[RMDB]
RNA sequence: GGGAACGACUCGAGUAGAGUCGAAAACGUACGUGGAGACACGUACGACGAGACUUCGGUCUCGAAUCGCGCGAUCUGGUGCCGCGCGCGCGCGAGGCGUCGGUGGUCGGCGAGCCCACGGACGCAAAAACUCGCGCGUAAAUAAAUAGCAAUAGGACGUCAUUAUUAGUUUCGACUAAUAAUGACGAAAAGAAACAACAACAACAAC
Reactivity to 2A3 in 0.01 (KOAc 150mM, MgCl2 10mM, bicine 150mM(pH8.5), 24C), signal-to-noise 4, nucleotides 027 to 156: c020g000u000a000c000g000u000g000g020a040g030a020c000a000c000g000u000a000c000g000a030c010g000a000g000a000c020u080u120c270g110g000u010c000u000c000g010a060a090u110c030g000c000g000c000g010a040u090c010u020g010g020u010g010c000c000g000c000g010c000g010c020g000c000g000c000g000a010g010g000c010g010u000c100g150g000u010g000g010u030c040g010g150c190g050a050g020c000c000c000a000c030g090g000a000c000g000c000a060a070a060a040a100c000u000c000g000c000g000c000g000u000a010a000a000u120a000a000a000u000a000g000c010a020a060u010a050g030g040a010
Reactivity to DMS in 0.01 (KOAc 150mM, MgCl2 10mM, bicine 150mM(pH8.5), 24C), signal-to-noise 2, nucleotides 027 to 156: c040g000u010a010c000g040u000g000g010a300g010a300c000a010c010g010u000a010c000g060a140c050g000a160g000a020c000u000u000c290g060g000u000c000u000c000g000a010a020u010c040g000c000g030c050g020a120u010c030u000g010g000u010g020c050c020g020c010g020c030g030c020g000c020g040c010g000a050g010g000c000g030u010c010g010g060u000g000g000u000c010g040g010c100g000a300g010c190c000c000a020c030g000g020a050c000g010c130a050a080a000a060a200c040u000c010g020c010g020c010g030u010a000a040a090u020a030a040a130u010a110g030c070a060a070u040a090g010g000a300